Overview
Chemical mapping of a 177-nucleotide RNA with 2A3 and DMS. It was measured as part of the RMDB library OK2TST. DMS (dimethyl sulfate) methylates the pairing face of unpaired adenines and cytosines. The reactions ran in a buffer of 150 mM KOAc, 10 mM MgCl2 and 150 mM bicine (pH 8.5), at 24 C. 2A3 adducts were read by reverse transcription with SuperScript II with manganese. The 2A3 profile rests on 8,615 reads.
RNA sequence: GGGAACGACUCGAGUAGAGUCGAAAACUAAUAGUCAGCUCAGCCCAGCCCUCCUUCCUGCAGAAGCACAGUGAGCCGAGGAGCCUUCAUAGGGACAGCCGCCCCUGGUGCACACACCCUCGUAUUCCAUUAGUCAUAACUUCGGUUAUGACUAAUGAAAAGAAACAACAACAACAAC
Reactivity to 2A3 in 0.01 (KOAc 150mM, MgCl2 10mM, bicine 150mM(pH8.5), 24C), signal-to-noise 4, nucleotides 027 to 126: c030u050a040a180u110a130g090u050c050a020g010c030u020c060a020g000c000c020c020a040g020c030c000c000u020c000c000u030u030c000c010u020g010c000a030g030a180a010g040c030a010c000a080g040u050g080a030g020c010c000g020a030g020g030a050g010c000c010u070u040c050a070u150a090g030g000g020a030c020a020g050c010c020g030c000c000c000c000u030g010g000u050g020c020a020c000a000c000a020c040c010c000u050c040g040u040a150u110u050c030
Reactivity to DMS in 0.01 (KOAc 150mM, MgCl2 10mM, bicine 150mM(pH8.5), 24C), signal-to-noise 9, nucleotides 027 to 126: c050u000a080a100u010a100g010u000c060a070g010c040u000c050a110g000c030c020c030a130g010c040c020c020u000c040c030u000u000c040c020u000g010c080a080g010a120a100g010c070a070c070a070g010u010g000a090g010c040c030g010a080g000g010a130g010c040c030u000u000c090a100u010a090g010g000g010a050c050a100g020c050c070g000c030c020c020c020u000g010g010u000g010c050a050c080a060c090a120c040c010c020u000c060g010u000a130u000u000c040